[RMDB]
RNA sequence: GGGAACGACUCGAGUAGAGUCGAAAAGAUAUGGACUUAGGCGUGUGGAGGAUUUCGUCGGAAACGACGAUAUCCGUUGAAACACGAACUACCUAAGUCCUAAGUCAAACACGCGUUCGCGCGUGAAGUCUCAGUAUUACUUCGGUAAUACUGAGACAAAAGAAACAACAACAACAAC
Reactivity to 2A3 in 0.01 (KOAc 150mM, MgCl2 10mM, bicine 150mM(pH8.5), 24C), signal-to-noise 4, nucleotides 027 to 126: g010a020u070a040u140g000g010a000c000u010u010a010g020g040c030g020u020g010u020g030g090a060g000g010a000u020u050u000c010g000u000c000g020g030a080a070a030c010g010a000c000g000a010u000a000u000c000c000g050u050u030g000a040a040a000c010a010c010g030a080a080c040u100a040c020c000u000a010a000g000u000c000c000u000a010a010g010u020c010a000a110a070c010a010c010g020c000g020u070u140c300g010c010g000c000g240u020g050a050a020
Reactivity to DMS in 0.01 (KOAc 150mM, MgCl2 10mM, bicine 150mM(pH8.5), 24C), signal-to-noise 5, nucleotides 027 to 126: g010a060u000a300u000g010g000a020c000u000u000a010g010g020c020g000u000g000u000g000g010a100g020g010a020u000u000u000c000g010u010c000g010g000a100a120a220c000g000a000c000g010a010u000a010u000c000c000g010u000u000g010a300a130a050c020a030c000g000a060a050c090u020a300c020c000u010a010a000g010u000c000c000u000a010a070g020u000c040a110a180a260c010a010c000g010c000g020u000u010c270g020c010g020c000g010u000g010a050a110
The record gives the reactivity of an RNA of 177 nucleotides to 2A3 and DMS. 2A3 adducts were read by reverse transcription with SuperScript II with manganese. It was measured as part of the RMDB library TTRDES. Values cover nucleotides 27 to 126. The DMS profile rests on 6,784 reads. Conditions: 150 mM KOAc, 10 mM MgCl2 and 150 mM bicine (pH 8.5), 24 C.